About this RNA: Conditions: 150 mM KOAc, 10 mM MgCl2 and 150 mM bicine (pH 8.5), 24 C. An RNA of 177 nucleotides, treated with DMS and 2A3 and read out base by base. High DMS reactivity at an A or C suggests that its Watson-Crick edge is free. DMS adducts were read by reverse transcription with MarathonRT.
RNA sequence: GGGAACGACUCGAGUAGAGUCGAAAACAUUGCUGGUCCAGGAUUCAUUAAUUUUUACUUAGAUAAUCAGUAUUUAACAGCAAUUAUUCCUGAAGCAAUUGAAAAAGGUGAUCAAUUUGGACAUGUAUGUAUUUCUGAUAUUCGUAUCAGAAAUACAAAAAGAAACAACAACAACAAC
Reactivity to DMS in 0.01 (KOAc 150mM, MgCl2 10mM, bicine 150mM(pH8.5), 24C), signal-to-noise 5, nucleotides 027 to 126: c120a020u000u000g010c020u010g000g010u010c100c040a120g010g000a020u010u000c150a060u020u010a060a040u020u020u020u010u020a050c110u020u010a080g000a110u010a040a090u030c050a110g000u030a040u020u010u020a070a100c030a030g010c010a020a010u000u000a070u010u000c000c000u000g010a080a130g010c130a040a040u010u020g010a030a040a100a060a100g010g010u010g000a060u000c050a040a050u010u020u020g000g000a060c060a080u030g010u040a100
Reactivity to 2A3 in 0.01 (KOAc 150mM, MgCl2 10mM, bicine 150mM(pH8.5), 24C), signal-to-noise 7, nucleotides 027 to 126: c030a010u020u030g010c020u070g000g050u040c010c030a050g050g040a020u080u070c020a020u060u200a160a120u090u110u080u070u060a050c020u040u070a040g060a150u170a170a080u110c040a010g040u070a120u070u140u060a110a070c040a000g030c000a010a030u050u010a040u060u010c010c000u020g020a020a010g070c020a060a120u070u120g150a090a020a010a040a040g190g020u110g040a060u040c040a050a090u040u060u160g040g030a030c020a060u110g090u090a060